[RMDB]
RNA sequence: GGGAACGACUCGAGUAGAGUCGAAAAAGCAUUUAUUGAGCUAGAUGACGAUGAAGAUAAUGAUAAACCUGAUUUAUAUAAAGAAAUCAUUAAACGUUUCCAUGUAGAUAGGUUAACUUGGAAAGACCUUUGAGAGCAAGUUCGCUUGCUCUCAAAGAAAAGAAACAACAACAACAAC
Reactivity to 2A3 in 0.01 (KOAc 150mM, MgCl2 10mM, bicine 150mM(pH8.5), 24C), signal-to-noise 2, nucleotides 027 to 126: a010g060c030a040u100u040u000a170u090u140g080a000g020c000u000a020g000a060u000g010a010c020g000a010u080g080a060a020g030a130u070a070a050u050g020a000u040a100a160a060c010c020u040g040a080u030u110u000a050u040a030u170a110a160a040g140a060a200a000u130c020a020u040u180a090a070a010c050g000u000u060u000c000c000a000u000g000u020a080g100a140u030a000g010g060u070u000a010a250c000u040u070g010g030a030a050a020g020a030c000
Reactivity to DMS in 0.01 (KOAc 150mM, MgCl2 10mM, bicine 150mM(pH8.5), 24C), signal-to-noise 2, nucleotides 027 to 126: a090g000c100a080u000u060u010a020u000u010g000a120g000c040u030a020g000a130u020g000a030c010g000a080u000g000a070a050g000a070u030a030a040u050g000a050u000a140a100a080c020c000u000g000a100u000u020u040a080u060a020u180a070a050a120g000a040a040a030u000c020a060u000u000a150a100a060c160g000u000u010u000c010c050a070u000g010u000a000g020a080u070a060g000g000u020u000a030a080c190u040u020g000g000a100a040a130g040a080c220

About this RNA
Structure probing data (2A3 and DMS) for a 177-nucleotide construct. The RNA was probed in 150 mM KOAc, 10 mM MgCl2 and 150 mM bicine (pH 8.5) at 24 C. For DMS, 1,402 sequencing reads were counted. For 2A3 the reverse transcriptase was SuperScript II with manganese.